[RMDB]
RNA sequence: GGGAACGACUCGAGUAGAGUCGAAAAGGUGCGCGACGCCGUCGACGUCGACCCCGAUGGCUACGUGCUGGUGAACGGGCGCACCACCGGCACCUCGCUGGAAGGUGUUUUCGCCGCCGGCGACCUGGACGUCAUAUCCGUUCGCGGAUAUGACGUCAAAAGAAACAACAACAACAAC
Reactivity to 2A3 in 0.01 (KOAc 150mM, MgCl2 10mM, bicine 150mM(pH8.5), 24C), signal-to-noise 3, nucleotides 027 to 126: g030g000u060g020c080g020c040g010a020c050g020c000c000g010u020c040g020a060c050g060u100c040g020a090c000c000c020c000g040a060u120g050g000c020u030a020c050g040u020g040c020u050g020g000u020g030a130a070c050g070g000g050c020g000c050a010c010c000a020c000c000g030g010c000a020c000c010u060c020g080c060u040g030g060a170a140g050g000u050g040u040u070u030u130c010g020c000c000g010c020c000g000g010c000g000a030c000c020u010g080

Chemical mapping of a 177-nucleotide RNA with 2A3. 2A3 adducts were read by reverse transcription with SuperScript II with manganese.